[RMDB]
The record gives the reactivity of an RNA of 177 nucleotides to DMS and 2A3. It was measured as part of the RMDB library OK2TRN. The RNA was probed in 150 mM KOAc, 10 mM MgCl2 and 150 mM bicine (pH 8.5) at 24 C. DMS adducts were read by reverse transcription with MarathonRT.
RNA sequence: GGGAACGACUCGAGUAGAGUCGAAAACGCAUGUAAAAGUCACUAUGGAGUUUGAGAUUCUUUCUCACCCUGGUUGAAAUUCCAUUGGUCAACAAGGCAUAGAAGGAGAGAUACCGACACCUGAUCCGUGCAAAGAUACGUUCGCGUAUCUUUGCACAAAAGAAACAACAACAACAAC
Reactivity to DMS in 0.01 (KOAc 150mM, MgCl2 10mM, bicine 150mM(pH8.5), 24C), signal-to-noise 2, nucleotides 027 to 126: c050g020c120a050u000g000u000a070a050a140a160g020u000c070a070c030u010a050u010g000g020a090g000u000u000u020g010a030g090a080u020u000c220u000u000u000c000u000c050a060c100c020c010u000g010g000u000u010g010a050a030a100u010u000c060c040a110u010u010g010g020u010c010a070a050c050a090a020g000g030c040a080u000a040g020a040a080g000g000a040g010a060g010a080u000a090c080c000g010a050c050a050c050c020u010g000a080u000c090c110
Reactivity to 2A3 in 0.01 (KOAc 150mM, MgCl2 10mM, bicine 150mM(pH8.5), 24C), signal-to-noise 2, nucleotides 027 to 126: c020g000c050a060u100g010u070a000a110a000a080g030u040c000a000c070u070a050u130g050g010a080g050u070u090u040g050a020g050a020u130u110c020u070u180u030c000u050c000a020c030c000c080u030g050g070u030u100g040a060a080a060u080u020c080c000a040u060u190g070g000u080c020a020a020c010a120a090g020g000c010a060u120a180g050a030a000g060g000a030g000a000g000a010u090a100c000c000g020a000c010a030c020c030u090g040a050u000c080c070